[RMDB]
RNA sequence: GGGAACGACUCGAGUAGAGUCGAAAAAGGGAUAUUUCUGCUGACAAUUCAACAUUCAAAGGGAUGAGUGUAUGACGUCUCUAAGAGAUGUCAUGGAGUGCAUGUAGAAGGGACUUUUUAUGGAGAACUACUUCUCAAAUCACUAUUCACAUCCUGACCGAUUACCCUCAUUCGUGAGGGUAAUCGGAAAAGAAACAACAACAACAAC
Reactivity to 2A3 in 0.01 (KOAc 150mM, MgCl2 10mM, bicine 150mM(pH8.5), 24C), signal-to-noise 1, nucleotides 027 to 156: a040g060g000g060a130u090a090u020u080u010c060u090g170c090u130g000a040c030a010a040u180u090c070a300a190c120a100u200u050c070a160a040a130g040g000g000a050u010g050a070g040u040g020u090a000u000g000a010c010g000u000c000u000c020u150a250a160g020a000g030a000u010g000u000c000a000u020g030g010a000g000u000g040c060a040u000g030u130a000g000a010a040g000g110g020a000c040u120u000u020u020u140a140u300g080g000a010g000a060a090c010u300a300c000u080u000c070u000c000a080a110a050u080c000a040c020u070a110u150u190c040a010c000a040u050c030c010u010g000a000